[RMDB]
Background:
Structure probing data (2A3 and DMS) for a 207-nucleotide construct.
RNA sequence: GGGAACGACUCGAGUAGAGUCGAAAAAAGCAUGCCGGGGAAUGGUGGUUUACCCCGUUAUCAACUGAUUACCGACCAAUAAUUGGCGAAACUCGUUUCGCGUUGGCUGCCUAAUUCAAGGAAUUAGAAUAGCUCUCCGGGUUCGCCCGGAGAGCAACAUUGGGAUUAAGUUCGCUUAAUCCCAAUGAAAAGAAACAACAACAACAAC
Reactivity to 2A3 in 0.01 (KOAc 150mM, MgCl2 10mM, bicine 150mM(pH8.5), 24C), signal-to-noise 2, nucleotides 027 to 156: a010a000g070c030a030u080g030c020c020g000g010g000g010a040a060u060g030g040u020g020g000u020u070u210a160c030c000c000c000g020u040u020a040u080c070a060a050c040u080g050a070u050u060a040c010c010g080a090c030c050a030a020u170a120a080u120u110g070g000c020g040a010a030a050c060u060c080g110u050u020u010c030g020c000g030u020u010g040g000c020u050g050c020c010u060a050a040u090u050c060a140a040g060g010a050a010u040u010a060g030a100a130u070a040g000c000u000c000u000c000c000g020g000g040u060u050c110g090c020c000c040g030g000a000g000a000g000c000a000a000
Reactivity to DMS in 0.01 (KOAc 150mM, MgCl2 10mM, bicine 150mM(pH8.5), 24C), signal-to-noise 2, nucleotides 027 to 156: a070a030g030c050a050u000g000c110c030g000g020g000g000a090a070u000g020g000u000g020g000u000u000u010a230c020c000c000c000g010u010u000a040u000c090a080a070c040u000g000a080u010u000a040c020c000g000a070c040c010a040a070u010a060a160u000u000g020g000c010g030a070a040a050c020u000c150g020u000u010u000c010g010c020g000u000u000g000g020c010u000g010c070c020u000a010a040u000u000c030a130a160g030g000a080a060u000u000a070g000a110a110u000a110g020c000u000c010u000c010c000g010g020g010u000u000c300g030c020c000c020g000g010a020g010a010g020c020a010a040
For 2A3 the reverse transcriptase was SuperScript II with manganese. Source: RMDB library M2RFPK, as collected in RNAgym. The RNA was probed in 150 mM KOAc, 10 mM MgCl2 and 150 mM bicine (pH 8.5) at 24 C.